RNA sequence: GGGAACGACUCGAGUAGAGUCGAAAAAGCAGUAGGGAGCCUGUAGAGAUCUUUAAGAGGGAGUAACUCGAUCUGUUUUGGACCUGUGGCAGUUACAGUAAAGUUGGUAGACAGGUUGUAGGAUUGCAGAGGUGAUUAAAAUGGUCCAGUGAGAGAACUCAUUAUCCGUAUUCGUACGGAUAAUGAGAAAAGAAACAACAACAACAAC
Reactivity to DMS in 0.01 (KOAc 150mM, MgCl2 10mM, bicine 150mM(pH8.5), 24C), signal-to-noise 2, nucleotides 027 to 156: a080g020c020a070g010u000a100g010g020g010a080g030c050c010u000g000u010a020g010a100g010a080u000c000u010u000u000a080a080g020a070g000g000g030a110g020u000a060a070c030u000c030g020a100u000c030u030g020u000u020u010u000g050g010a020c010c010u010g000u000g020g030c050a090g020u000u010a050c060a130g010u010a060a050a130g010u010u000g010g020u000a120g010a110c030a040g020g020u000u000g020u020a070g000g020a120u000u000g010c030a070g010a070g000g040u000g020a140u000u010a020a090a050a090u010g020g030u000c040c020a080g010u010g000a100g000a160g010a080a250
Reactivity to 2A3 in 0.01 (KOAc 150mM, MgCl2 10mM, bicine 150mM(pH8.5), 24C), signal-to-noise 4, nucleotides 027 to 156: a000g010c020a000g020u120a020g000g030g020a020g020c030c010u040g020u080a070g020a020g020a110u060c060u070u180u170a110a040g010a050g020g020g010a040g030u050a080a050c020u010c070g050a080u020c050u060g080u040u060u070u080g040g010a030c000c020u030g010u040g050g000c030a030g010u060u050a050c010a020g020u090a010a120a040g030u070u050g010g040u030a030g010a060c020a020g010g000u020u010g020u040a030g020g060a070u060u090g010c010a010g010a030g030g020u020g000a020u050u130a070a050a070a070u070g010g000u000c020c010a010g010u050g020a060g010a010g030a050a020
Conditions: 150 mM KOAc, 10 mM MgCl2 and 150 mM bicine (pH 8.5), 24 C. The record gives the reactivity of an RNA of 207 nucleotides to DMS and 2A3. Reactivities are rounded to 0.1 and cut off at 0 and 3. For DMS the reverse transcriptase was MarathonRT. Source: RMDB library OK3TST, as collected in RNAgym. Values cover nucleotides 27 to 156.